[RMDB]
RNA sequence: GGGAACGACUCGAGUAGAGUCGAAAACGUCAGCUCCAGAGUAUCGGGGGUUGGAUAUCCCUCGUGAAUAUUGCAGGCAUCGACUGCAAAGACUAAACACUCCUCAAGACCGAUAGCGAACAAGUAGAAACAAGUUAUUUUUCGAAAUAACUUGUUUAAAAGAAACAACAACAACAAC
Reactivity to 2A3 in 0.01 (KOAc 150mM, MgCl2 10mM, bicine 150mM(pH8.5), 24C), signal-to-noise 9, nucleotides 027 to 126: c060g030u020c010a010g010c010u010c020c010a030g010a020g140u100a090u160c040g020g000g000g000g010u030u050g080g020a040u070a060u130c000c020c000u010c020g040u050g070a070a030u170a090u090u060g000c010a010g030g000c040a140u120c140g110a080c020u000g000c000a020a030a010g040a000c030u080a020a090a020c030a020c020u030c010c000u020c030a060a030g020a040c000c010g080a070u070a040g050c030g030a030a050c040a140a020g100u110a050g180
Reactivity to DMS in 0.01 (KOAc 150mM, MgCl2 10mM, bicine 150mM(pH8.5), 24C), signal-to-noise 9, nucleotides 027 to 126: c140g010u000c020a040g010c020u000c010c030a100g010a190g020u010a090u010c040g010g010g000g000g010u010u000g000g010a100u010a110u010c010c000c000u010c070g020u010g010a080a100u020a090u010u000g010c020a020g000g010c070a160u020c190g010a100c010u000g000c020a020a030a080g010a110c200u010a070a080a070c070a080c050u000c020c020u010c050a060a090g000a090c060c030g000a090u010a050g010c040g000a060a060c110a060a070g010u010a090g010

This 177-nucleotide RNA was probed chemically with 2A3 and DMS.
The RNA was probed in 150 mM KOAc, 10 mM MgCl2 and 150 mM bicine (pH 8.5) at 24 C.